RNA sequence: GGGAACGACUCGAGUAGAGUCGAAAAGAUAUGGAGCUGUGGGAGCCUAUCGGUCGGAAACGACCGUAAGGGCGACGAUCACACUCCUAAGUCAGUACUCUAGUAUCCGUUCGCGGAUACUAGAGAAGUCUUGUGUAUGGUUCGCCAUACACAAGACAAAAGAAACAACAACAACAAC
Reactivity to DMS in 0.01 (KOAc 150mM, MgCl2 10mM, bicine 150mM(pH8.5), 24C), signal-to-noise 2, nucleotides 027 to 126: g000a020u000a090u000g010g000a030g020c170u000g020u000g000g010g010a050g040c000c010u010a170u000c000g020g010u000c000g010g000a020a040a040c020g020a010c000c010g020u000a030a140g010g000g010c020g020a060c240g000a060u000c000a020c000a110c010u000c000c000u000a000a060g010u000c000a140g010u010a200c010u000c000u000a000g010u000a010u000c000c000g000u010u010c200g020c010g000g000a010u000a000c000u000a000g000a010g010a040a080
Reactivity to 2A3 in 0.01 (KOAc 150mM, MgCl2 10mM, bicine 150mM(pH8.5), 24C), signal-to-noise 2, nucleotides 027 to 126: g020a000u020a000u060g000g010a010g050c300u020g040u000g040g010g000a010g000c010c000u020a040u070c020g000g000u000c010g010g020a080a000a000c010g000a000c000c040g000u070a290a300g040g000g000c030g050a070c000g000a010u010c010a000c000a000c000u000c020c010u000a020a010g010u000c020a010g090u100a110c000u000c000u010a020g000u000a000u000c020c020g010u030u060c300g000c000g130g000a000u000a000c000u000a010g000a000g000a000a000
An RNA of 177 nucleotides, treated with DMS and 2A3 and read out base by base. For DMS the reverse transcriptase was MarathonRT. For 2A3 the reverse transcriptase was SuperScript II with manganese. The reactions ran in a buffer of 150 mM KOAc, 10 mM MgCl2 and 150 mM bicine (pH 8.5), at 24 C. The DMS profile rests on 2,473 reads.